[RMDB]
RNA sequence: GGGAACGACUCGAGUAGAGUCGAAAAUACCGUCUUCUCCCCGACGGUUUCAAUCCAUAGCUUCACGUUGUGUAGCGUAGGUGGAUGGUAUCGUGUGGUGUAUAAACACCACAUAGUCUCUUAGGGGUCAAGCUGAUAAACUUCGGUUUAUCAGCAACCCAAGUAGCUGAUUCGUCAGCUACUUGGGAAAAGAAACAACAACAACAAC
Reactivity to DMS in 0.01 (KOAc 150mM, MgCl2 10mM, bicine 150mM(pH8.5), 24C), signal-to-noise 2, nucleotides 027 to 156: u000a060c000c020g000u000c020u000u010c040u010c000c000c020c010g020a060c010g040g010u010u000u010c120a040a070u000c010c030a070u000a250g020c020u000u000c040a010c010g010u000u010g010u010g020u000a030g020c010g000u010a110g050g070u000g000g030a040u000g000g000u000a060u010c030g000u000g000u000g000g000u010g050u020a170u010a170a150a120c020a000c000c000a020c000a010u000a040g010u000c060u010c000u000u010a180g040g010g010g010u020c020a040a180g000c000u000g020a040u000a000a020a030c000u010u020c300g040g000u000u000u000a010u010c000a010g010c000a020a040
Reactivity to 2A3 in 0.01 (KOAc 150mM, MgCl2 10mM, bicine 150mM(pH8.5), 24C), signal-to-noise 4, nucleotides 027 to 156: u040a000c000c000g010u010c010u160u040c040u130c010c000c000c000g010a010c010g000g020u010u030u070c030a030a060u000c010c000a030u020a070g010c010u070u080c030a030c080g300u300u300g020u120g020u080a010g010c030g080u090a110g150g000u020g010g020a010u030g020g080u190a060u160c060g000u020g010u000g000g000u020g030u020a080u130a260a220a020c000a000c000c010a000c000a000u010a010g010u000c010u000c000u080u220a060g000g000g010g000u050c060a080a050g000c000u000g000a000u000a010a000a000c000u000u040c150g080g010u000u000u000a000u000c000a010g010c000a010a000